Chemical mapping of a 177-nucleotide RNA with DMS and 2A3.
For 2A3 the reverse transcriptase was SuperScript II with manganese.
The reactions ran in a buffer of 150 mM KOAc, 10 mM MgCl2 and 150 mM bicine (pH 8.5), at 24 C.
Source: RMDB library OK1LIB, as collected in RNAgym.
Reactivities are given for positions 27 through 126.

[RMDB]
RNA sequence: GGGAACGACUCGAGUAGAGUCGAAAAGAACGCCUUCACGUACGCUGCGUGCACGGACGACAGCAGCUACGUCGUCGUGUCCGAAUUCGAGGUUCUGCCGUCGAUGGCGGCCGGGUGUCUCGAGAGGGAUACCUACGCCUUUCGAGGCGUAGGUAUCAAAAGAAACAACAACAACAAC
Reactivity to DMS in 0.01 (KOAc 150mM, MgCl2 10mM, bicine 150mM(pH8.5), 24C), signal-to-noise 3, nucleotides 027 to 126: g000a060a030c070g010c020c020u010u040c150a020c020g010u010a060c160g030c020u000g000c040g080u020g060c050a090c100g020g050a150c030g010a100c040a090g010c030a040g010c060u000a040c010g000u010c110g000u000c050g000u000g010u010c010c020g010a110a110u020u020c040g010a060g010g000u000u000c040u010g000c010c020g020u000c020g020a130u020g000g010c010g010g000c070c100g010g020g010u010g000u020c020u010c010g030a070g020a130g000g000
Reactivity to 2A3 in 0.01 (KOAc 150mM, MgCl2 10mM, bicine 150mM(pH8.5), 24C), signal-to-noise 6, nucleotides 027 to 126: g040a030a010c030g040c020c000u040u040c040a010c020g020u050a010c130g020c020u040g030c020g130u070g030c060a060c140g150g110a060c050g030a020c050a020g020c020a020g030c080u060a030c030g020u020c030g020u010c010g010u010g060u040c010c020g040a080a110u050u020c010g010a020g020g000u020u000c010u020g020c000c010g030u060c030g170a160u300g010g010c000g000g000c000c020g020g000g000u130g060u010c000u000c010g030a060g030a020g030g090